[RMDB]
RNA sequence: GGGAACGACUCGAGUAGAGUCGAAAAUGUUUCCCAGCCAGGGAUUUUCAUCCUCGAGUUUCUUGAUGGUUCUCCUGCUCUUCCGGAGCUUUCUUUCGAGGUCUUCCGCGUCUUUUCUUGCUUGGAUUCACCCUAGCCUUCGGGCUAGGGAAAAGAAACAACAACAACAAC
Reactivity to 2A3 in 0.01 (KOAc 150mM, MgCl2 10mM, bicine 150mM(pH8.5), 24C), signal-to-noise 2, nucleotides 027 to 129: u110g000u010u020u010c000c000c030a000g070c000c010a050g020g010g010a060u020u040u080u150c050a040u020c000c000u040c020g090a110g050u030u130u040c060u090u140g010a140u130g060g000u020u020c020u070c020c010u040g020c000u040c000u090u060c010c040g100g000a050g020c000u040u030u010c020u010u090u030c030g020a010g040g030u000c000u030u000c050c000g050c020g020u020c000u000u010u060u020c030u030u000g070c010u010u060g040g000a070u150u030c000a070
Reactivity to DMS in 0.01 (KOAc 150mM, MgCl2 10mM, bicine 150mM(pH8.5), 24C), signal-to-noise 2, nucleotides 027 to 129: u070g050u040u000u020c000c010c050a240g030c140c180a070g000g000g000a030u030u000u020u060c120a000u020c030c030u020c150g020a130g010u000u000u000c040u060u000g010a180u040g060g020u000u010c020u000c000c050u000g020c010u010c020u060u000c110c070g060g000a110g040c140u000u000u000c030u000u000u050c060g040a000g040g030u010c020u040u000c090c050g030c090g020u020c020u000u010u040u030c000u020u060g020c070u020u100g040g030a160u030u000c080a120
About this RNA
Structure probing data (2A3 and DMS) for a 170-nucleotide construct. The data come from the RNA Mapping Database (RMDB), library 15KLIB. The RNA was probed in 150 mM KOAc, 10 mM MgCl2 and 150 mM bicine (pH 8.5) at 24 C.